[RMDB]
RNA sequence: GGGAACGACUCGAGUAGAGUCGAAAACUCGUGAGGCAAAAAUUUCUACAUUUUGUCCGAUUUCAAAUGAUGAGGAGAGAUGUCCUGCCAUCACAGGUUGGAAUUAAUCCUUAUUCCAUGGAAUGGGCCCUCAGGCUAAAUUCGUUUAGCCUGAGGGAAAAGAAACAACAACAACAAC
Reactivity to DMS in 0.01 (KOAc 150mM, MgCl2 10mM, bicine 150mM(pH8.5), 24C), signal-to-noise 1, nucleotides 027 to 126: c010u000c060g000u000g000a150g010g010c000a000a030a040a100a110u000u000u000c080u000a140c170a090u000u000u000u000g000u000c000c030g010a070u000u000u000c020a030a060a200u010g000a010u000g000a090g020g010a030g010a300g000a030u000g000u050c060c000u000g020c000c000a070u000c300a130c180a090g050g000u000u010g030g000a170a020u000u010a090a300u000c000c000u000u010a060u010u000c190c100a160u000g000g000a010a020u000g020g050g000
Reactivity to 2A3 in 0.01 (KOAc 150mM, MgCl2 10mM, bicine 150mM(pH8.5), 24C), signal-to-noise 1, nucleotides 027 to 126: c010u020c020g060u030g090a120g000g000c000a040a030a050a030a050u130u290u040c120u140a170c040a190u030u020u040u020g060u000c030c010g060a040u000u040u040c090a100a090a020u170g000a000u040g020a070g010g010a010g000a000g010a030u080g190u250c000c000u000g000c010c000a170u220c060a010c020a130g000g000u010u020g000g010a000a000u050u000a000a000u020c000c020u000u010a090u090u050c060c020a040u070g020g050a020a030u040g000g020g000